[RMDB]
RNA sequence: GGGAACGACUCGAGUAGAGUCGAAAAAGAUGCAACUGCGCGCACCCACAAUUUACGUGGAGCGGCUAUGAUGGCAUAGAGUAUCAUUGCAACUACCUACGACACGAUGAUGAAUCUGUAUGUAGUAAGUCUGAGUGGACUUCGGUCCACUCAGACUAAAAGAAACAACAACAACAAC
Reactivity to DMS in 0.01 (KOAc 150mM, MgCl2 10mM, bicine 150mM(pH8.5), 24C), signal-to-noise 1, nucleotides 027 to 126: a090g050a110u010g000c010a070a010c090u010g030c060g010c080g000c050a070c230c010c020a000c010a150a190u010u020u020a110c290g000u000g000g010a300g010c020g000g000c010u000a170u000g020a130u000g030g000c030a070u000a070g000a070g070u020a030u010c050a090u000u010g010c030a090a110c060u010a090c110c000u000a000c030g010a070c000a020c180g000a010u000g000a090u000g000a130a030u000c010u000g020u000a010u000g060u000a020g030u010a040
Reactivity to 2A3 in 0.01 (KOAc 150mM, MgCl2 10mM, bicine 150mM(pH8.5), 24C), signal-to-noise 1, nucleotides 027 to 126: a010g110a020u060g000c010a050a000c040u080g000c250g000c000g000c060a200c060c020c000a000c000a050a110u130u170u230a030c120g040u010g030g000a020g000c000g010g000c040u000a020u030g070a080u190g070g090c000a010u000a070g080a010g060u150a050u080c060a020u050u050g020c010a030a000c010u030a020c030c020u020a000c020g040a020c010a010c140g000a000u020g060a030u100g020a090a000u010c030u130g010u050a150u080g000u010a010g030u010a060